[RMDB]
RNA sequence: GGGAACGACUCGAGUAGAGUCGAAAAGAGAGCUGCUUCGGCAGCUCUCCGUCAGGUAGUUCCUAUCUCAAUUACCUCUAGUGGCCAACGUCCGGAUAGGAAGAGAGCCCUGCUUCGGCAGGGCUAACACCGUCUUGGUAUUCGUACCAAGACGGUGAAAAGAAACAACAACAACAAC
Reactivity to DMS in 0.01 (KOAc 150mM, MgCl2 10mM, bicine 150mM(pH8.5), 24C), signal-to-noise 2, nucleotides 027 to 126: g000a020g000a000g020c000u000g010c000u000u010c230g020g020c000a010g000c000u000c000u000c000c040g010u000c100a070g000g020u020a030g010u000u000c010c000u000a020u000c010u000c080a080a070u010u000a050c010c000u000c070u010a070g030u000g000g000c020c050a120a080c140g020u010c080c100g020g010a030u000a020g020g010a080a060g010a140g000a050g010c010c000c000u000g030c020u000u000c200g030g020c000a000g000g000g020c000u000a010a070
Reactivity to 2A3 in 0.01 (KOAc 150mM, MgCl2 10mM, bicine 150mM(pH8.5), 24C), signal-to-noise 2, nucleotides 027 to 126: g020a000g010a020g020c020u050g000c030u100u120c250g110g000c000a000g020c000u020c000u020c000c000g040u040c060a020g030g080u080a050g040u080u040c000c000u020a020u000c010u020c060a130a170u110u080a080c030c010u050c050u130a110g100u120g130g030c030c090a090a040c080g060u050c030c030g000g040a040u020a000g000g050a060a030g050a020g000a000g010c000c040c000u000g010c000u010u010c060g070g000c030a010g000g000g030c010u000a000a010